Annotation
This 207-nucleotide RNA was probed chemically with 2A3 and DMS. The RNA was probed in 150 mM KOAc, 10 mM MgCl2 and 150 mM bicine (pH 8.5) at 24 C. For 2A3 the reverse transcriptase was SuperScript II with manganese.
RNA sequence: GGGAACGACUCGAGUAGAGUCGAAAAAACUCCAGUUCUCAAGCAUGGCAAGCUAAAGCUCCAUGGGCAACAGCUUGCAACUGGAAUCGCUGUAACCUCGCCUCCAAAGUCUAUGGUAGUUGUCACUCCCUCUGACACAUUUCACUAUAGCCUUAGGCAUGUAGUCGUUUUUCGAAACGACUACAUGAAAAGAAACAACAACAACAAC
Reactivity to 2A3 in 0.01 (KOAc 150mM, MgCl2 10mM, bicine 150mM(pH8.5), 24C), signal-to-noise 3, nucleotides 027 to 156: a000a000c040u020c020c010a010g020u080u010c180u060c110a090a050g060c080a130u170g030g000c010a010a010g000c000u070a130a080a040g010c010u060c130c110a170u270g000g040g000c040a100a030c020a070g010c000u000u000g000c000a010a000c000u000g020g030a020a020u080c070g040c170u090g050u240a080a080c010c010u040c100g040c010c020u070c020c020a040a040a020g010u010c000u010a020u030g020g020u040a070g020u060u060g020u020c000a010c040u070c020c030c000u070c040u010g010a000c000a000c000a020u040u230u190c060a000c030u020a010u020a010g000c010c010u020u020a030g000g010
Reactivity to DMS in 0.01 (KOAc 150mM, MgCl2 10mM, bicine 150mM(pH8.5), 24C), signal-to-noise 2, nucleotides 027 to 156: a030a050c060u040c000c000a060g020u000u010c040u010c050a080a120g040c070a100u000g040g000c020a030a070g010c030u000a060a160a270g010c000u000c010c080a110u020g030g030g050c020a120a250c110a100g000c010u000u000g020c140a040a000c000u000g020g010a070a110u010c060g010c040u000g030u010a150a070c050c000u000c060g010c010c000u030c030c000a090a080a040g010u000c050u000a010u000g040g010u000a080g010u000u000g000u000c020a070c050u000c090c050c040u020c050u000g000a030c010a060c020a230u010u010u000c090a000c000u000a040u000a090g010c020c000u000u000a080g020g000
It was measured as part of the RMDB library OK3TST. The 2A3 profile rests on 2,201 reads. Reactivities are given for positions 27 through 156.